An RNA of 177 nucleotides, treated with 2A3 and DMS and read out base by base. For DMS the reverse transcriptase was MarathonRT. For 2A3, 10,778 sequencing reads were counted. The RNA was probed in 150 mM KOAc, 10 mM MgCl2 and 150 mM bicine (pH 8.5) at 24 C.
[RMDB]
RNA sequence: GGGAACGACUCGAGUAGAGUCGAAAACUCGUCUGGUUCGCCAGACGAGAAAGAAAAUCCGAGCGAAGGGAAGGGCACAAACGGUCGGAGUGCCCAAACCCAAAACGUGGGGGUUCGCCCCCACGAACAGUCAUAUAUACUUCGGUAUAUAUGACUGAAAAGAAACAACAACAACAAC
Reactivity to 2A3 in 0.01 (KOAc 150mM, MgCl2 10mM, bicine 150mM(pH8.5), 24C), signal-to-noise 5, nucleotides 027 to 126: c000u000c000g000u000c010u010g000g040u040u060c170g030c050c000a000g010a000c000g000a000g000a000a010a000g000a000a080a000a020u050c040c030g020a050g050c110g100a170a070g000g000g020a030a070g010g000g000c040a010c040a080a300a020c130g070g090u210c140g100g070a060g000u000g000c010c000c000a010a030a020c010c000c000a020a050a000a040c020g000u000g000g000g010g000g000u010u030c140g080c000c000c000c010c000a000c000g000a010a010
Reactivity to DMS in 0.01 (KOAc 150mM, MgCl2 10mM, bicine 150mM(pH8.5), 24C), signal-to-noise 5, nucleotides 027 to 126: c010u000c000g010u000c000u010g010g020u000u000c220g030c000c000a010g000a000c010g000a010g010a020a060a120g000a120a060a140a090u010c010c010g030a090g020c140g010a130a110g000g020g030a200a300g000g010g000c020a020c020a050a060a170c050g010g010u010c140g020g000a120g000u000g000c000c000c000a000a050a110c010c000c020a070a040a080a120c020g010u000g000g000g000g010g000u010u010c190g020c010c000c000c000c000a000c010g000a030a110